Notes:
This 177-nucleotide RNA was probed chemically with DMS and 2A3. The data come from the RNA Mapping Database (RMDB), library OK1LIB. Reactivities are given for positions 27 through 126. Conditions: 150 mM KOAc, 10 mM MgCl2 and 150 mM bicine (pH 8.5), 24 C.
RNA sequence: GGGAACGACUCGAGUAGAGUCGAAAAUGAGCAACUACACGGCUUUGCCAGCGGCCAGCAGUUCGCCGAUACCCUCUGCGACAGGGUGGCCCGCUUUCACGGCACCGCCUUUCGUGCCUGGCUGGCCGUAUCCCUGCAUAUUCGUAUGCAGGGAUACAAAAGAAACAACAACAACAAC
Reactivity to DMS in 0.01 (KOAc 150mM, MgCl2 10mM, bicine 150mM(pH8.5), 24C), signal-to-noise 7, nucleotides 027 to 126: u030g000a120g010c050a050a050c070u020a040c100a160c100g000g000c010u010u010u040g010c010c020a060g020c030g000g010c000c000a090g010c070a070g000u020u020c100g030c000c070g010a090u030a070c080c030c030u000c060u020g000c040g000a050c120a060g000g000g010u000g000g010c300c020c050g020c050u000u020u030c210a090c150g010g020c050a070c030c090g010c060c040u000u010u010c090g010u000g000c100c040u030g000g030c010u000g010g000c020c250
Reactivity to 2A3 in 0.01 (KOAc 150mM, MgCl2 10mM, bicine 150mM(pH8.5), 24C), signal-to-noise 9, nucleotides 027 to 126: u210g010a040g040c030a030a040c020u130a040c090a040c110g020g000c020u090u100u170g010c010c010a010g010c000g010g010c000c010a020g030c010a010g040u060u080c050g000c010c010g010a020u150a150c020c020c000u020c060u110g040c010g030a030c040a070g010g020g050u020g020g000c030c090c020g020c020u110u170u170c110a060c050g010g000c010a010c010c030g070c020c000u050u090u070c050g010u030g040c000c020u020g070g000c000u000g010g000c000c010